[RMDB]
RNA sequence: GGGAACGACUCGAGUAGAGUCGAAAACAUUGUUCUGAUCAUCUGAAGAUCAGCUAUUAGAAGAGAAAGAUCAGUUAAGUCCUUUGGAGCUGAUCAGCUUGAUACAAGAACUACUGAUUUCAACUUCAAAACGGGUGCUACUUCGGUAGCACCCGAACACAUCAAAAGCGUUCGCGCUUUUGAUGUGAAAAGAAACAACAACAACAAC
Reactivity to 2A3 in 0.01 (KOAc 150mM, MgCl2 10mM, bicine 150mM(pH8.5), 24C), signal-to-noise 4, nucleotides 027 to 156: c030a040u110u200g050u190u060c000u000g000a010u000c010a030u030c090u170g100a140a020g000a040u000c000a000g000c000u150a190u300u190a130g010a030a020g010a010g070a060a110a030g040a040u010c010a000g010u060u160a140a010g000u040c000c000u030u060u140g050g000a010g000c000u040g050a250u090c020a000g000c000u050u070g020a040u060a230c060a050a010g020a030a000c000u090a030c000u040g000a030u040u030u030c050a100a030c010u030u030c030a020a060a070a040c010g000g000g010u000g000c000u000a010c010u020u040c170g050g000u000a000g000c000a000c000c000c000g000a000a000
Reactivity to DMS in 0.01 (KOAc 150mM, MgCl2 10mM, bicine 150mM(pH8.5), 24C), signal-to-noise 2, nucleotides 027 to 156: c090a140u010u000g020u010u000c000u010g000a030u000c000a140u010c130u010g010a230a220g010a030u000c000a040g040c090u000a040u000u010a160g010a160a050g000a090g010a140a180a070g000a060u000c060a070g030u000u000a140a100g030u000c050c040u000u000u000g030g000a050g020c000u000g000a070u000c050a040g060c010u010u010g010a240u000a200c120a070a060g000a050a030c020u010a110c020u010g020a020u020u010u020c020a060a230c010u000u000c000a020a040a090a170c020g050g030g040u000g000c000u000a000c030u000u030c300g030g010u000a010g030c000a000c000c010c010g020a010a010
The data come from the RNA Mapping Database (RMDB), library M2RFPK. Structure probing data (2A3 and DMS) for a 207-nucleotide construct. For 2A3, 1,633 sequencing reads were counted. The RNA was probed in 150 mM KOAc, 10 mM MgCl2 and 150 mM bicine (pH 8.5) at 24 C.